[RMDB]
RNA sequence: GGGAACGACUCGAGUAGAGUCGAAAAGCUUUUUUGUUGGUGUUGGCAUCUUCGUGAUGAAAGAUCAGAAGGAGCACGGACACCAGGAUAGAAAAGAAGGGAAGCACGGACAUAAGCCGGUUUGACGGCGCAGUUCCUUAUUCGUAAGGAACUGCGCAAAAGAAACAACAACAACAAC
Reactivity to DMS in 0.01 (KOAc 150mM, MgCl2 10mM, bicine 150mM(pH8.5), 24C), signal-to-noise 2, nucleotides 027 to 126: g030c020u000u000u000u000u030u000g010u020u020g010g000u010g000u020u010g000g030c020a090u000c010u000u000c040g010u000g010a010u010g030a140a100a070g020a080u010c000a180g000a040a000g000g000a020g020c000a100c120g000g020a000c070a020c020c000a010g020g000a040u010a010g000a030a000a030a020g020a140a190g000g000g020a030a070g010c090a070c010g010g040a060c060a100u010a070a130g000c000c020g000g000u030u010u030g000a120c160g000
Reactivity to 2A3 in 0.01 (KOAc 150mM, MgCl2 10mM, bicine 150mM(pH8.5), 24C), signal-to-noise 3, nucleotides 027 to 126: g020c000u000u000u050u050u070u060g110u040u040g040g000u020g020u000u030g010g010c010a080u030c000u000u010c070g280u090g020a010u010g080a220a130a020g220a030u030c010a000g000a010a010g020g020a030g000c030a050c080g090g010a000c000a000c000c000a020g040g030a050u100a090g120a000a020a000a000g070a010a080g050g000g030a030a000g000c040a040c090g020g040a010c030a050u160a140a000g030c000c000g040g000u010u100u100g070a050c040g030
Structure probing data (DMS and 2A3) for a 177-nucleotide construct. Values are in units of 0.01, from 0 to 300, in steps of 10. DMS adducts were read by reverse transcription with MarathonRT. Conditions: 150 mM KOAc, 10 mM MgCl2 and 150 mM bicine (pH 8.5), 24 C. The data come from the RNA Mapping Database (RMDB), library RFM100. The 2A3 profile rests on 1,538 reads. Values cover nucleotides 27 to 126.